[RMDB]
RNA sequence: GGGAACGACUCGAGUAGAGUCGAAAAGAUAUGGACCUACCCAUGUCGAAGAACUAUCUCGGAAACGAGAGUAGGGAGACAAGUAGGUCCUAAGUCAAAGGUUGACCAUCUUCGGAUGGUCAACCAAGUUACGCACGUAGUUCGCUACGUGCGUAACAAAAGAAACAACAACAACAAC
Reactivity to 2A3 in 0.01 (KOAc 150mM, MgCl2 10mM, bicine 150mM(pH8.5), 24C), signal-to-noise 1, nucleotides 027 to 126: g000a000u020a000u020g000g000a000c010c020u000a000c060c060c070a210u300g000u000c020g070a250a030g000a000a010c010u000a000u000c000u000c030g000g000a000a000a000c010g020a000g000a020g050u110a000g040g010g000a010g000a000c040a050a050g020u010a000g000g000u000c000c000u000a000a000g020u000c000a140a080a020g010g010u010u010g000a010c000c010a030u000c000u060u040c210g150g000a000u000g000g000u000c000a000a000c000c000a000a000
Reactivity to DMS in 0.01 (KOAc 150mM, MgCl2 10mM, bicine 150mM(pH8.5), 24C), signal-to-noise 1, nucleotides 027 to 126: g020a000u000a000u000g010g000a000c000c000u000a000c010c230c170a130u010g000u000c000g000a140a150g000a190a280c000u000a010u000c000u010c000g010g010a020a030a020c000g000a000g000a050g000u000a020g040g000g000a040g000a000c000a110a270g000u010a010g010g000u000c000c000u010a000a080g000u000c000a070a080a140g000g020u000u000g010a000c010c000a000u000c000u020u000c300g030g010a020u000g000g000u010c000a000a000c000c000a000a020
Chemical mapping of a 177-nucleotide RNA with 2A3 and DMS. For 2A3 the reverse transcriptase was SuperScript II with manganese. It was measured as part of the RMDB library TTRDEL. Values are in units of 0.01, from 0 to 300, in steps of 10. Conditions: 150 mM KOAc, 10 mM MgCl2 and 150 mM bicine (pH 8.5), 24 C.